This 207-nucleotide RNA was probed chemically with 2A3.
RNA sequence: GGGAACGACUCGAGUAGAGUCGAAAACGUAGGGUCAGGUCCCCUGCCCGCUCCAGCGGGGAACUGUCCGUGAGCGUGGGCAUCAGGGCUCUUGUGCCGUCAGAACCUGGGAGUCAUGGAAGUGCCCGCGUAAGGCGCCCUCCGUCGAGCCUCACUCGCCGUACAGAAAAUUCGUUUUCUGUACGGCAAAAGAAACAACAACAACAAC
Reactivity to 2A3 in 0.01 (KOAc 150mM, MgCl2 10mM, bicine 150mM(pH8.5), 24C), signal-to-noise 2, nucleotides 027 to 156: c020g020u030a010g020g030g010u050c090a050g050g020u060c050c000c000c020u100g000c000c030c040g090c040u040c040c040a010g000c000g000g000g010g020a020a040c030u070g070u070c020c030g060u130g090a050g030c000g010u020g000g010g010c010a040u300c030a090g010g000g020c000u000c000u020u060g220u110g090c090c030g080u100c040a050g040a170a090c030c020u020g030g000g010a010g010u010c010a070u110g060g050a220a050g060u000g020c010c000c000g000c000g000u020a030a020g060g000c000g000c000c000c000u060c040c010g020u030c030g040a020g000c020c000u120c070a040c050u100c060
The data come from the RNA Mapping Database (RMDB), library OK3TST.
For 2A3, 1,458 sequencing reads were counted.
For 2A3 the reverse transcriptase was SuperScript II with manganese.